[RMDB]
Structure probing data (2A3 and DMS) for a 207-nucleotide construct.
DMS adducts were read by reverse transcription with MarathonRT.
For DMS, 2,099 sequencing reads were counted.
For 2A3, 5,173 sequencing reads were counted.
RNA sequence: GGGAACGACUCGAGUAGAGUCGAAAAGUAAUCAACGCAUUAGAAGCUAUUCGUUUUUACGUAUCUUUCGCAUGUACCUUUAACUUCCAUAAGAACAUGGAAAUCAUGGAAGGUAAUGCUAAGAUUAUGAAGUUCAUUGCGCGUGAUGAACAGCUUCCUACUCCGCGAAAUUCGUUUCGCGGAGUAGAAAAGAAACAACAACAACAAC
Reactivity to 2A3 in 0.01 (KOAc 150mM, MgCl2 10mM, bicine 150mM(pH8.5), 24C), signal-to-noise 7, nucleotides 027 to 156: g030u040a020a020u040c040a050a020c030g000c030a040u070u090a080g030a060a020g030c040u100a150u110u160c100g060u040u030u030u160u230a080c050g040u050a020u020c010u010u040u070c050g010c010a010u040g090u250a010c000c000u020u000u040a060a060c020u030u000c000c000a010u040a130a160g080a120a070c060a060u010g010g040a010a010a010u150c120a130u180g160g030a000a000g000g000u000a000a000u000g000c000u010a000a000g000a000u050u050a070u190g080a050a000g020u000u040c010a010u030u050g030c060g040c080g070u050g010a010u000g000a010a010c030a020g020c010u020u010c010
Reactivity to DMS in 0.01 (KOAc 150mM, MgCl2 10mM, bicine 150mM(pH8.5), 24C), signal-to-noise 1, nucleotides 027 to 156: g030u000a140a060u010c000a130a080c050g000c070a060u000u000a150g030a070a100g040c010u000a080u020u000c030g000u000u000u000u000u000a060c100g010u000a060u000c020u000u010u000c300g000c060a010u000g020u010a050c000c010u000u010u000a050a090c030u000u000c000c010a000u000a140a180g000a120a210c240a050u010g000g000a050a000a030u000c080a080u000g040g030a010a010g020g010u000a060a010u020g010c010u000a030a020g000a020u000u000a150u010g010a110a080g010u010u000c030a140u000u000g010c070g010c000g010u000g040a020u000g060a100a180c090a090g020c080u010u000c020
For 2A3 the reverse transcriptase was SuperScript II with manganese. Conditions: 150 mM KOAc, 10 mM MgCl2 and 150 mM bicine (pH 8.5), 24 C.